[RMDB]
RNA sequence: GGGAACGACUCGAGUAGAGUCGAAAAAGAUUUGCCAAGUUUGCCUUUUGCUGAGCACGGCAAAUUUGCCUAAUUUGCCCAGCACGGCAAAUUUCGAAAAAGUAGAUUUGGCGAAUUUGCCGAUUGCACGAGGCUAGUAGUUCGCUACUAGCCUCGUAAAAGAAACAACAACAACAAC
Reactivity to 2A3 in 0.01 (KOAc 150mM, MgCl2 10mM, bicine 150mM(pH8.5), 24C), signal-to-noise 2, nucleotides 027 to 126: a000g090a050u070u010u000g070c000c000a030a080g030u000u030u090g040c000c000u050u060u070u050g110c090u110g050a050g050c030a010c030g000g010c020a010a010a010u010u030u020g000c000c000u050a040a020u000u020u070g010c000c010c020a060g150c160a060c030g000g040c000a000a000a000u110u090u040c040g010a140a000a000a000a050g190u120a050g030a080u030u000u010g000g010c020g000a030a020u000u000u030g060c010c030g110a150u150u100g010c000
Reactivity to DMS in 0.01 (KOAc 150mM, MgCl2 10mM, bicine 150mM(pH8.5), 24C), signal-to-noise 2, nucleotides 027 to 126: a110g000a020u060u010u030g000c060c010a080a070g040u010u010u010g000c110c050u000u000u000u000g040c030u030g010a110g130c020a170c300g010g010c000a010a000a020u000u000u010g000c110c140u010a040a020u000u010u000g050c000c000c160a270g040c120a210c130g000g000c010a000a010a030u000u030u030c180g040a110a040a070a140a120g000u010a140g000a080u000u000u000g000g000c040g010a000a000u000u000u000g010c030c010g000a150u020u020g000c080